RNA sequence: GGGAACGACUCGAGUAGAGUCGAAAAUGGGUACCUAGUAUGUCUCUUGCAGACAUUAAGUGCAAUUUACCUACUACUGCUCAGGAAUGGUCAAAGGUGAGUGGCUCUUGAUUUGCACAGUGGCUUUCUAAUGCUGAGCACAAAAUACAGCUGGAUGGUAGUGCGUAGGUUUCGACCUACGCACUACAAAAGAAACAACAACAACAAC
Reactivity to 2A3 in 0.01 (KOAc 150mM, MgCl2 10mM, bicine 150mM(pH8.5), 24C), signal-to-noise 1, nucleotides 027 to 156: u070g000g010g060u030a050c000c000u020a040g060u070a040u030g010u040c000u000c090u150u260g100c080a010g040a050c000a050u120u170a030a020g090u020g030c020a020a000u080u120u100a080c050c030u030a030c020u080a080c040u020g070c020u000c040a030g030g110a120a130u150g040g040u050c020a020a050a110g080g000u000g050a040g020u010g000g090c000u000c020u060u110g010a090u090u000u160g010c000a020c000a090g050u060g030g000c000u110u060u010c080u160a130a070u100g050c010u010g020a040g000c100a000c130a000a050a000a000u050a040c000a020g060c030u030g110g040a060u170g120